The data come from the RNA Mapping Database (RMDB), library OK1LIB. The record gives the reactivity of an RNA of 177 nucleotides to 2A3 and DMS. For DMS the reverse transcriptase was MarathonRT. For DMS, 5,305 sequencing reads were counted. For 2A3 the reverse transcriptase was SuperScript II with manganese. For 2A3, 5,527 sequencing reads were counted.
[RMDB]
RNA sequence: GGGAACGACUCGAGUAGAGUCGAAAACAACAAAACAAAACAUAGGGGAGUCAGGGUUCGGAACUCCUCCCUGAACCUAGGGUAACACUGACUGUGGAGGGGAAAAGAAAGAAAACAAAACAAAACAAAUACGACGAUUAUUCGUAAUCGUCGUAUUAAAAGAAACAACAACAACAAC
Reactivity to 2A3 in 0.01 (KOAc 150mM, MgCl2 10mM, bicine 150mM(pH8.5), 24C), signal-to-noise 5, nucleotides 027 to 126: c040a000a010c040a020a180a020a010c080a010a170a050a000c070a080u190a060g000g010g010g030a040g040u020c020a020g010g000g000u040u050c010g000g050a100a110c050u050c010c000u010c010c000c000u020g030a030a020c000c010u040a020g050g000g050u080a080a010c070a020c130u100g070a030c020u060g080u100g130g030a070g030g010g040g000a110a060a020a000g180a020a070a010g100a010a090a020a010c090a010a070a030a000c100a020a080a040a010c080a010
Reactivity to DMS in 0.01 (KOAc 150mM, MgCl2 10mM, bicine 150mM(pH8.5), 24C), signal-to-noise 4, nucleotides 027 to 126: c030a160a100c170a090a070a120a140c160a090a130a100a100c160a090u030a100g020g010g010g000a060g020u000c020a070g020g000g010u010u010c100g030g020a150a070c030u010c020c020u000c060c020c010u000g000a020a040c020c020u010a110g000g030g020u000a050a060c240a160c070u020g030a060c030u000g010u020g000g000a060g000g000g000g030a090a080a010a090g000a080a070a070g020a060a020a060a040c220a050a060a080a080c160a060a030a120a080c240a050